[RMDB]
RNA sequence: GGGAACGACUCGAGUAGAGUCGAAAAGCAACCAUAACGUUUUUAUUUAACUCAUGGAAUGCAUCAGCUAAACCAACUGUAACCGUUGAUUUACCUUCACCAGCUGGUGUUGGGCUCAUCGCAGUUAAUACCGUUAGAUGUUCGCAUCUAACGGUAUAAAAGAAACAACAACAACAAC
Reactivity to DMS in 0.01 (KOAc 150mM, MgCl2 10mM, bicine 150mM(pH8.5), 24C), signal-to-noise 7, nucleotides 027 to 126: g010c060a100a300c020c020a060u010a080a120c210g010u000u000u000u010u020a070u030u020u000a020a020c020u000c220a020u000g000g010a100a110u010g010c020a030u010c060a050g010c050u010a050a040a090c040c010a040a040c030u000g010u010a060a090c210c120g000u000u000g000a040u000u000u000a120c080c050u010u000c060a040c060c060a130g010c110u010g000g010u000g000u000u010g000g010g000c230u000c060a020u000c090g010c070a070g000u000u000a050
Reactivity to 2A3 in 0.01 (KOAc 150mM, MgCl2 10mM, bicine 150mM(pH8.5), 24C), signal-to-noise 5, nucleotides 027 to 126: g020c010a030a050c000c010a030u050a070a060c060g000u000u000u000u080u070a270u060u200u060a030a010c010u030c040a020u040g000g050a170a070u090g020c010a050u060c030a040g030c030u110a110a030a060c020c020a010a020c020u030g050u120a060a050c050c040g020u010u030g030a070u030u050u210a140c010c000u000u020c020a020c040c020a070g250c120u230g020g000u000g030u030u020g010g040g000c000u030c020a030u020c030g000c040a010g010u010u040a030